[RMDB]
RNA sequence: GGGAACGACUCGAGUAGAGUCGAAAAAUGCAAGGGGAGGUUUCGGCCAAAUGUUGUAUGCAGAAAGCGUGAGGAAGGUAGCACUUAGACACUCACGAGUAGCGGUUCGGCAGUAGUGCUAAAAUGAGACAGUACGAAAAGUUCGCUUUUCGUACAACCAGAAAGUAAAGUUCGCUUUACUUUCUGGAAAAGAAACAACAACAACAAC
Reactivity to DMS in 0.01 (KOAc 150mM, MgCl2 10mM, bicine 150mM(pH8.5), 24C), signal-to-noise 3, nucleotides 027 to 156: a090u010g030c040a100a060g010g010g020g020a080g020g020u000u010u000c040g010g020c050c040a060a060a100u000g020u000u010g010u010a070u000g030c050a100g000a090a080a100g020c030g010u000g000a050g010g010a100a060g020g020u000a090g000c040a070c050u010u000a100g030a130c070a080c010u000c010a070c020g010a070g020u000a050g020c040g020g000u000u010c080g020g000c040a070g010u010a050g010u000g010c020u010a030a030a100a100u010g000a140g000a080c050a100g020u000a000c000g000a000a010a020a020g000u010u020c300g020c020u000u000u000u000c000g020u000a020c000a040a090
Reactivity to 2A3 in 0.01 (KOAc 150mM, MgCl2 10mM, bicine 150mM(pH8.5), 24C), signal-to-noise 5, nucleotides 027 to 156: a000u120g000c040a040a030g020g010g000g020a040g000g050u040u060u100c070g040g010c030c030a030a080a060u100g020u060u020g040u070a070u080g030c030a020g100a070a060a010g060c020g010u010g000a020g020g050a050a020g040g010u030a010g010c020a010c060u030u040a030g030a060c020a010c060u040c010a020c030g020a040g040u080a030g020c060g020g040u070u070c030g040g000c020a030g030u100a010g010u010g030c010u040a040a030a030a100u100g010a020g020a040c090a080g010u000a000c010g000a000a000a000a000g030u040u060c110g030c120u010u000u000u000c000g000u000a000c000a000a010
The data come from the RNA Mapping Database (RMDB), library M2RFPK. The record gives the reactivity of an RNA of 207 nucleotides to DMS and 2A3. Values cover nucleotides 27 to 156. The 2A3 profile rests on 5,575 reads.